[RMDB]
RNA sequence: GGGAACGACUCGAGUAGAGUCGAAAAGAGGCGGGAAAGUUAAUCAAUAGUGCAACAAAACUUUCCCUAAAUCAAAUCUAAAUCGUUUUGUUGCACUUUUUUCUUCGAUUUAGAUUUGUAAAACCAAAGAUAAAGACAGUUUCGACUGUCUUUAUCUAAAAGAAACAACAACAACAAC
Reactivity to 2A3 in 0.01 (KOAc 150mM, MgCl2 10mM, bicine 150mM(pH8.5), 24C), signal-to-noise 2, nucleotides 027 to 126: g050a020g020g090c100g030g000g020a010a000a020g040u060u060a040a060u140c090a150a230u030a240g010u020g000c000a010a000c010a030a170a000a000c000u000u000u000c000c000c010u020a000a000a020u100c000a000a000a020u020c000u020a000a000a000u000c010g010u000u040u100u060g000u030u020g020c000a000c000u260u030u010u000u020u070c070u050u060c000g000a000u010u000u030a000g000a010u000u000u010g040u040a070a070a000a000c020c010a130a120
Reactivity to DMS in 0.01 (KOAc 150mM, MgCl2 10mM, bicine 150mM(pH8.5), 24C), signal-to-noise 3, nucleotides 027 to 126: g000a100g020g050c240g020g010g000a000a020a010g010u000u020a130a140u010c190a070a150u010a040g010u000g000c010a010a010c000a030a050a040a030c010u010u000u000c010c010c000u000a020a010a080u010c010a020a010a000u000c000u000a030a010a010u000c010g010u000u000u000u000g000u010u000g010c010a010c010u000u000u010u010u020u010c110u010u000c010g010a000u000u000u000a010g000a010u000u000u000g000u010a090a060a100a150c080c040a090a100
Chemical mapping of a 177-nucleotide RNA with 2A3 and DMS. The DMS profile rests on 2,430 reads. It was measured as part of the RMDB library M2PK90. The 2A3 profile rests on 1,764 reads. The RNA was probed in 150 mM KOAc, 10 mM MgCl2 and 150 mM bicine (pH 8.5) at 24 C.